Structure probing data (DMS and 2A3) for a 207-nucleotide construct. Values cover nucleotides 27 to 156. The DMS profile rests on 3,734 reads. 2A3 adducts were read by reverse transcription with SuperScript II with manganese. It was measured as part of the RMDB library M2RFPK.

RNA sequence: GGGAACGACUCGAGUAGAGUCGAAAAGGAGGACGAAGCAUAUUUCUGUUUCUGGAGGAUUAUUUAUAAUCUGCCGGAAAGUCUUGCAGGUGGCUGGGAUAUGUUCAGCCUGGUAGAAUUAAGCACGAAAACGUGUCCUUGUUCGCAAGGACACGAACGAUACCUGUGAGUUCGCUCACAGGUAUCGAAAAGAAACAACAACAACAAC
Reactivity to DMS in 0.01 (KOAc 150mM, MgCl2 10mM, bicine 150mM(pH8.5), 24C), signal-to-noise 1, nucleotides 027 to 156: g000g000a040g020g000a070c040g010a120a110g000c060a130u000a070u010u000u010c000u000g000u000u000u000c000u000g010g010a020g000g000a000u000u000a040u000u000u000a080u000a060a010u000c000u000g000c000c010g000g000a020a020a060g010u000c030u000u000g010c040a070g010g040u000g010g010c010u000g000g010g000a060u000a050u000g040u010u000c050a100g040c000c020u000g010g060u000a090g020a040a080u000u000a050a110g030c010a100c050g000a100a060a060a110c050g040u000g010u000c000c010u000u010g020u010u000c220g030c000a020a010g000g010a010c010a010c000g010a000a020
Reactivity to 2A3 in 0.01 (KOAc 150mM, MgCl2 10mM, bicine 150mM(pH8.5), 24C), signal-to-noise 2, nucleotides 027 to 156: g060g000a010g000g020a020c030g030a040a010g030c030a040u050a080u150u130u090c070u060g140u020u060u000c020u010g000g010a020g010g000a000u010u020a020u030u260u020a090u040a060a000u010c010u060g090c010c010g000g030a060a010a000g020u010c040u060u070g030c020a020g010g060u030g010g030c030u020g000g000g020a030u050a020u160g060u050u080c020a010g010c000c000u010g000g020u050a030g060a070a050u110u100a090a010g030c040a020c150g070a060a050a080a030c000g010u010g000u000c000c000u010u010g030u040u100c160g000c140a000a000g000g010a000c010a000c000g000a020a000
Conditions: 150 mM KOAc, 10 mM MgCl2 and 150 mM bicine (pH 8.5), 24 C.